[RMDB]
The data come from the RNA Mapping Database (RMDB), library OK3TST. Chemical mapping of a 207-nucleotide RNA with 2A3 and DMS. The RNA was probed in 150 mM KOAc, 10 mM MgCl2 and 150 mM bicine (pH 8.5) at 24 C. For 2A3, 4,933 sequencing reads were counted. 2A3 adducts were read by reverse transcription with SuperScript II with manganese.
RNA sequence: GGGAACGACUCGAGUAGAGUCGAAAAGUAUGAAUCAGAAAAGGGCGAACAGCGCGUUUGUAUCGAGCAUCUUGAUCGCAUGGAUUUCCUGCAUGAACCUGCCCGUAAAUGGUCCGAGGUUGGUUGGGUAGCUCGUCGUGCAUGGAUGACGCGUAAGCAACAAUAAACACUUCGGUGUUUAUUGUUGAAAAGAAACAACAACAACAAC
Reactivity to 2A3 in 0.01 (KOAc 150mM, MgCl2 10mM, bicine 150mM(pH8.5), 24C), signal-to-noise 6, nucleotides 027 to 156: g030u050a080u200g070a080a040u100c040a050g090a020a130a030a010g070g020g020c050g040a080a060c060a040g010c020g010c030g040u020u090u080g060u050a100u070c060g010a030g020c030a060u050c050u080u110g070a060u130c050g010c100a070u080g050g050a060u060u040u070c000c000u010g000c010a030u030g010a010a010c010c010u010g000c000c000c010g010u050a040a110a090u160g060g020u050c030c050g040a060g050g050u110u120g040g020u060u100g000g020g010u020a020g000c040u030c120g050u010c020g020u010g020c000a020u100g000g030a050u060g030a010c020g010c000g040u010a030a050g040
Reactivity to DMS in 0.01 (KOAc 150mM, MgCl2 10mM, bicine 150mM(pH8.5), 24C), signal-to-noise 4, nucleotides 027 to 156: g020u000a080u010g010a090a080u000c070a100g010a060a060a090a110g000g020g020c030g030a070a100c050a120g020c040g020c040g020u000u000u010g020u010a100u000c030g000a070g030c050a190u000c060u000u010g000a090u010c050g010c050a080u000g020g010a170u010u000u000c010c000u000g010c030a080u000g000a050a060c090c020u010g000c010c000c000g030u000a050a060a100u010g000g020u000c060c030g000a080g020g010u000u000g020g020u000u000g000g010g020u000a090g020c040u000c030g020u000c040g030u010g000c050a090u010g010g010a090u010g010a060c020g020c030g010u010a090a180g020